[RMDB]
RNA sequence: GGGAACGACUCGAGUAGAGUCGAAAAGAUCAUCAGCCCGCAAUCUGUACAAAUUGUCGGGGCCAGUGGCAAUUUACAGAUUUCACCUGAUGGUGAUGUCACGCGUAAUGGCAAAACGUUGACGCUAACCCGAUUAUACGUUCGCGUAUAAUCGGGUAAAAGAAACAACAACAACAAC
Reactivity to 2A3 in 0.01 (KOAc 150mM, MgCl2 10mM, bicine 150mM(pH8.5), 24C), signal-to-noise 1, nucleotides 027 to 126: g100a010u050c000a000u010c000a000g060c030c000c050g010c000a010a010u010c010u020g010u020a030c040a150a120a020u020u010g020u040c010g020g070g120g130c050c010a040g020u110g030g000c000a000a000u000u040u040a010c000a000g000a010u040u000u080c050a010c030c010u050g070a020u070g000g030u030g060a180u220g010u020c030a020c130g040c000g060u080a130a050u120g200g010c110a000a040a000a080c010g080u050u070g060a010c030g000c050u080a080
Reactivity to DMS in 0.01 (KOAc 150mM, MgCl2 10mM, bicine 150mM(pH8.5), 24C), signal-to-noise 2, nucleotides 027 to 126: g000a030u000c000a020u010c010a030g000c050c020c080g000c260a040a010u000c000u010g010u010a050c300a040a010a050u010u000g040u000c010g020g010g010g000c060c060a030g030u000g000g000c020a060a000u000u000u000a010c020a020g000a010u000u000u000c070a030c240c010u010g020a050u000g000g000u010g020a100u000g010u000c010a010c120g010c020g000u000a070a050u010g000g020c040a090a060a080a070c070g010u010u020g000a040c070g010c160u000a040

This 177-nucleotide RNA was probed chemically with 2A3 and DMS. DMS adducts were read by reverse transcription with MarathonRT. Source: RMDB library OK2TRN, as collected in RNAgym. For 2A3 the reverse transcriptase was SuperScript II with manganese.